[RMDB]
RNA sequence: GGGAACGACUCGAGUAGAGUCGAAAAUGGUGGUGCGGUGCAGGAAGUCGGUGCGGGCACACCGGAUUUCGCGGUGUGCCCGUGCGACCUUGGUCUUGGCUUUGCGGCGGUUGUUCGAGCCCUUCUGCAAGCGUAUUACUUUCGAGUAAUACGCUUGAAAAGAAACAACAACAACAAC
Reactivity to DMS in 0.01 (KOAc 150mM, MgCl2 10mM, bicine 150mM(pH8.5), 24C), signal-to-noise 3, nucleotides 027 to 126: u020g000g020u000g000g050u000g000c050g020g020u000g030c050a070g020g040a100a060g010u000c010g040g040u020g010c030g030g010g050c010a020c000a000c000c010g020g010a270u000u020u040c230g030c020g030g020u000g010u010g000c010c000c010g020u000g000c000g010a040c020c100u010u010g000g010u010c020u000u000g010g000c050u000u000u010g010c060g000g000c070g000g010u000u020g010u000u000c030g000a150g000c010c040c030u000u010c030u000g010
Reactivity to 2A3 in 0.01 (KOAc 150mM, MgCl2 10mM, bicine 150mM(pH8.5), 24C), signal-to-noise 2, nucleotides 027 to 126: u150g010g010u010g000g070u090g020c030g070g040u010g000c000a030g010g080a060a030g030u030c150g030g090u050g020c010g000g020g000c000a000c000a030c000c030g050g040a170u140u200u170c270g030c010g080g000u000g000u000g020c010c000c000g010u030g000c000g010a010c010c010u050u080g000g040u030c030u030u040g050g030c000u090u040u020g000c030g030g000c010g000g040u040u060g020u000u040c000g010a020g000c010c030c000u050u040c090u020g000
The data come from the RNA Mapping Database (RMDB), libraries RFM100 and RFMREP. An RNA of 177 nucleotides, treated with DMS and 2A3 and read out base by base. 2A3 adducts were read by reverse transcription with SuperScript II with manganese.